[RMDB]
RNA sequence: GGGAACGACUCGAGUAGAGUCGAAAAAUCUUGUUCGCAAGAUGUUCGGUCCUAAGUCGAAGCUUGGAUUUAUGUGGGAGCGAGGAUCUAUCGGAAACGAUAGGGAGCUCCCGACAUUGUCAGCUUCGAUAUGGAGCAUAGGCGUAUUCGUACGCAACGAUAGGUUCUAGUUCGCUAGAACCUAUCGAAAAGAAACAACAACAACAAC
Reactivity to DMS in 0.01 (KOAc 150mM, MgCl2 10mM, bicine 150mM(pH8.5), 24C), signal-to-noise 1, nucleotides 027 to 156: a030u000c010u000u010g010u000u000c200g000c030a050a030g020a070u000g000u000u000c050g000g000u000c000c020u000a060a300g020u000c000g000a020a050g010c010u000u000g030g010a110u000u000u010a030u020g030u000g030g020g000a010g020c030g010a090g040g000a050u000c030u000a010u000c000g010g000a230a060a240c010g000a070u000a000g000g000g020a110g020c000u000c000c000c000g000a000c050a040u000u000g000u010c040a090g030c010u000u000c000g060a030u000a170u000g000g010a040g010c020a170u000a080g010g020c000g050u000a070u000u000c300g030u000a010c030g020c020a080a160
Reactivity to 2A3 in 0.01 (KOAc 150mM, MgCl2 10mM, bicine 150mM(pH8.5), 24C), signal-to-noise 5, nucleotides 027 to 156: a000u030c020u030u020g040u060u130c270g040c090a020a020g000a020u040g090u150u300c090g040g110u020c000c000u060a130a060g020u000c000g000a000a000g010c050u120u170g250g040a120u300u300u090a010u090g000u020g000g000g000a000g000c000g010a300g020g000a010u000c000u010a000u000c000g040g060a120a060a050c010g000a000u000a000g000g000g000a000g000c000u000c010c000c000g000a000c000a010u010u000g000u020c010a000g000c000u010u000c000g020a000u000a020u040g020g000a030g080c140a160u170a190g180g000c000g000u030a030u010u140c240g050u070a050c040g010c020a000a060